This 207-nucleotide RNA was probed chemically with 2A3. Reactivities are rounded to 0.1 and cut off at 0 and 3. The RNA was probed in 150 mM KOAc, 10 mM MgCl2 and 150 mM bicine (pH 8.5) at 24 C. The data come from the RNA Mapping Database (RMDB), library OK3TST. For 2A3 the reverse transcriptase was SuperScript II with manganese. The 2A3 profile rests on 429 reads.
RNA sequence: GGGAACGACUCGAGUAGAGUCGAAAAACGCUUAGAUUGAUUGAUUCGCGAAUCGAGGCAAAGCAAACCCAACCGCCGCGACGGUACGGCCAGUCUCGACUCAUCGAAACAAUGGAGUCAAUGGGGAUUGGGACAAAAUCAAGUCGACACAACGUCACUAUUGUCUACGCUUCGGCGUAGACAAUAGAAAAGAAACAACAACAACAAC
Reactivity to 2A3 in 0.01 (KOAc 150mM, MgCl2 10mM, bicine 150mM(pH8.5), 24C), signal-to-noise 1, nucleotides 027 to 156: a000c050g000c000u000u000a120g000a090u100u140g000a050u010u160g030a100u120u090c040g020c040g180a040a080u070c000g000a000g150g000c050a060a000a060g000c040a140a100a170c000c000c010a020a110c010c000g070c020c010g060c020g110a040c080g110g000u070a100c040g040g000c020c020a020g030u000c020u030c060g000a000c000u000c000a090u040c110g140a090a000a050c050a050a200u200g080g000a020g070u000c000a000a140u200g000g010g000g000a030u030u000g000g000g000a030c060a050a110a010a010u140c070a020a070g040u070c040g050a010c040a000c020a200a060c000g020u000c020a000